[RMDB]
RNA sequence: GGGAACGACUCGAGUAGAGUCGAAAACUGGUCUGGCGAAAGGCUCCCGUGUGUCGCCUCGCAGUGUGGGUGCGGCCUCGUACCGGGCAGCGUGACCCUGACCUACAGCAAACGCCCCAGAGCCCAAUCAAUGCUUUCACUUCGGUGAAAGCAUUGAAAAAGAAACAACAACAACAAC
Reactivity to 2A3 in 0.01 (KOAc 150mM, MgCl2 10mM, bicine 150mM(pH8.5), 24C), signal-to-noise 5, nucleotides 027 to 126: c020u030g000g010u020c030u070g030g010c030g080a080a050a070g180g020c010u040c000c020c000g060u080g020u070g030u060c020g010c020c000u000c000g120c090a240g030u100g020u190g200g030g020u200g010c010g000g020c020c040u060c030g060u060a060c070c020g030g010g000c070a020g010c050g180u070g050a090c020c000c000u030g040a090c000c010u050a060c040a010g080c030a070a080a050c050g040c000c000c000c000a020g010a020g010c000c000c010a010a020
Reactivity to DMS in 0.01 (KOAc 150mM, MgCl2 10mM, bicine 150mM(pH8.5), 24C), signal-to-noise 2, nucleotides 027 to 126: c060u000g000g040u000c010u010g000g000c040g000a160a040a080g000g020c020u000c010c040c030g000u000g000u000g010u000c040g030c040c010u020c000g010c000a130g020u030g000u000g000g000g050u010g000c060g000g010c070c070u010c200g000u020a070c240c010g000g000g000c030a020g010c020g030u010g000a300c300c040c000u010g000a050c010c020u010a080c110a070g000c110a000a070a100c200g000c050c000c020c020a060g000a040g000c000c020c020a100a120